[RMDB]
RNA sequence: GGGAACGACUCGAGUAGAGUCGAAAAAUUCAGGGGAAGCGUGUCGGUGCAGGCAAGAGACCACCGUAAGCGUCGCUGCAACCAAUUAAGCGCCGAUUCUCAUCAGCGCGAGUACGCUCUCGCUGCCUAAGCGAAGCGUCUCUGUCGGCCCGGGAUACACUUGAUAGUUCUUCGGAACUAUCAAGUGAAAAGAAACAACAACAACAAC
Reactivity to DMS in 0.01 (KOAc 150mM, MgCl2 10mM, bicine 150mM(pH8.5), 24C), signal-to-noise 1, nucleotides 027 to 156: a180u010u020c030a130g020g010g000g000a060a020g010c000g030u000g000u000c000g030g000u010g000c010a110g000g020c020a090a140g030a070g000a070c050c020a120c070c080g000u010a080a080g000c060g040u000c030g000c040u000g000c040a090a080c080c060a100a140u000u000a100a180g010c000g040c000c010g020a040u030u000c100u020c080a160u000c030a060g060c060g020c020g010a090g000u010a060c020g010c020u000c080u000c000g040c000u010g020c150c140u000a090a090g030c010g000a080a050g010c030g020u000c010u000c030u010g010u000c060g000g010c010c010c010g070g030g010a170u000a140
Reactivity to 2A3 in 0.01 (KOAc 150mM, MgCl2 10mM, bicine 150mM(pH8.5), 24C), signal-to-noise 3, nucleotides 027 to 156: a010u140u080c060a040g010g000g000g040a010a030g040c040g020u030g060u090c020g000g010u030g020c020a010g000g040c010a040a000g010a010g000a020c020c010a010c030c030g140u140a050a000g010c020g060u030c000g010c000u010g000c000a010a060c050c020a030a140u240u240a140a050g010c020g020c040c000g020a030u140u070c120u080c140a150u040c020a030g060c020g000c000g090a000g000u090a010c010g000c010u030c020u000c060g000c000u010g070c040c110u130a090a010g010c000g000a010a000g010c000g000u000c010u000c000u040g050u020c020g030g050c000c040c000g030g030g030a080u100a090